[RMDB]
RNA sequence: GGGAACGACUCGAGUAGAGUCGAAAAGGGAGAACCGAGCAGAGGCAUAGCGAACUGCGCACGGAGAAGCCUUGAGGGAAUGCCGUAGGACCCGGGUUCGAUUCCCGGCUGCUCCACCGAAGGGCCAGAUCAGUGAUAAUUUCGAUUAUCACUGAUCAAAAGAAACAACAACAACAAC
Reactivity to DMS in 0.01 (KOAc 150mM, MgCl2 10mM, bicine 150mM(pH8.5), 24C), signal-to-noise 9, nucleotides 027 to 126: g000g000g000a080g010a130a110c060c040g010a110g010c040a070g000a100g010g020c050a080u030a120g000c070g010a100a090c070u010g000c060g030c100a100c080g000g000a100g000a130a150g010c010c010u010u010g020a190g010g000g010a070a060u010g000c030c040g010u000a090g010g000a100c090c020c010g000g000g000u000u020c150g000a280u020u010c000c010c000g010g000c120u020g010c050u000c020c030a120c060c040g010a130a080g010g000g010c030c140a090
Reactivity to 2A3 in 0.01 (KOAc 150mM, MgCl2 10mM, bicine 150mM(pH8.5), 24C), signal-to-noise 9, nucleotides 027 to 126: g050g020g010a120g020a070a030c020c020g010a020g000c020a010g020a050g070g000c050a090u110a070g040c040g080a090a050c040u070g020c030g020c040a050c050g050g020a070g030a080a020g030c010c000u040u070g040a080g020g010g020a080a060u100g050c020c020g030u050a060g010g080a050c010c010c000g010g000g000u050u080c050g030a050u050u050c000c000c000g000g000c010u050g000c020u010c020c010a040c000c010g020a040a040g010g000g000c000c000a010
The record gives the reactivity of an RNA of 177 nucleotides to DMS and 2A3.
It was measured as part of the RMDB library OK1LIB.
High DMS reactivity at an A or C suggests that its Watson-Crick edge is free.
The RNA was probed in 150 mM KOAc, 10 mM MgCl2 and 150 mM bicine (pH 8.5) at 24 C.